[RMDB]
RNA sequence: GGGAACGACUCGAGUAGAGUCGAAAAUCUGCCAUGCCCUCCAAGAAAGCAGUGGACCCACGCCCCCCCUCACAUGAGAACGUAGCCCGGGCUGGUUGCAGGCUGGAUGGUGCUGGACCGCCCGGCCCGACCUAGGGAGAUUCGUCUCCCUAGGUCGAAAAGAAACAACAACAACAAC
Reactivity to DMS in 0.01 (KOAc 150mM, MgCl2 10mM, bicine 150mM(pH8.5), 24C), signal-to-noise 2, nucleotides 027 to 126: u000c030u000g010c000c010a110u000g020c030c010c000u010c050c040a160a090g020a080a170a140g010c030a070g020u000g000g010a210c050c020c000a120c180g000c010c000c000c020c000c000c000u010c040a030c140a060u010g010a110g020a120a090c100g010u000a080g040c220c010c020g020g010g000c020u000g030g100u000u000g040c030a010g010g000c000u000g040g010a120u010g000g020u020g010c010u000g030g000a030c000c020g010c000c000c010g020g010c030c050